The record gives the reactivity of an RNA of 207 nucleotides to 2A3 and DMS. The 2A3 profile rests on 4,729 reads. Reactivities are rounded to 0.1 and cut off at 0 and 3. The reactions ran in a buffer of 150 mM KOAc, 10 mM MgCl2 and 150 mM bicine (pH 8.5), at 24 C. Values cover nucleotides 27 to 156.

RNA sequence: GGGAACGACUCGAGUAGAGUCGAAAAGAAUGUAACCAUUGUGCGACCAAUGGUUACAUGAUUGCCAUCCUUGAGUAUUGACGCUACAAUACUGGAUCAUAAGCGACUAUGAUGAAGGAUGGCAAUGCUAACUACAUGGUCGCAUAUGUGGUUAGGAAUUUAUGACGCAGUUCGCUGCGUCAUAAAUAAAAGAAACAACAACAACAAC
Reactivity to 2A3 in 0.01 (KOAc 150mM, MgCl2 10mM, bicine 150mM(pH8.5), 24C), signal-to-noise 5, nucleotides 027 to 156: g150a060a120u180g010u090a000a000c000c000a000u010u030g000u010g010c010g010a010c010c000a020a060u070g030g000u000u000a000c000a000u020g020a030u010u050g010c000c000a000u000c010c000u010u060g080a000g010u010a000u010u030g100a130c040g080c240u180a120c140a020a000u000a020c010u040g080g060a020u010c000a010u010a060a070g130c060g090a070c100u020a000u000g010a000u030g070a000a010g000g000a000u000g000g010c000a000a000u000g000c000u000a000a010c000u020a020c020a110u040g010g000u000c000g000c000a000u020a030u030g020u000g010g020u000u020a020g000g050a080
Reactivity to DMS in 0.01 (KOAc 150mM, MgCl2 10mM, bicine 150mM(pH8.5), 24C), signal-to-noise 3, nucleotides 027 to 156: g000a130a130u010g050u000a020a060c000c010a030u000u000g010u000g030c090g000a070c080c000a050a200u000g010g010u000u000a000c060a030u010g020a080u000u000g010c020c000a010u000c000c010u020u000g000a120g020u000a030u000u000g000a240c180g020c160u010a180c010a050a020u000a030c020u010g010g030a090u000c020a040u010a040a160g010c140g020a180c060u000a030u000g020a050u000g000a050a030g010g000a020u000g010g050c000a010a000u000g010c060u010a040a030c010u010a070c070a070u000g020g010u000c020g020c010a080u010a020u010g030u000g000g000u010u000a040g060g010a100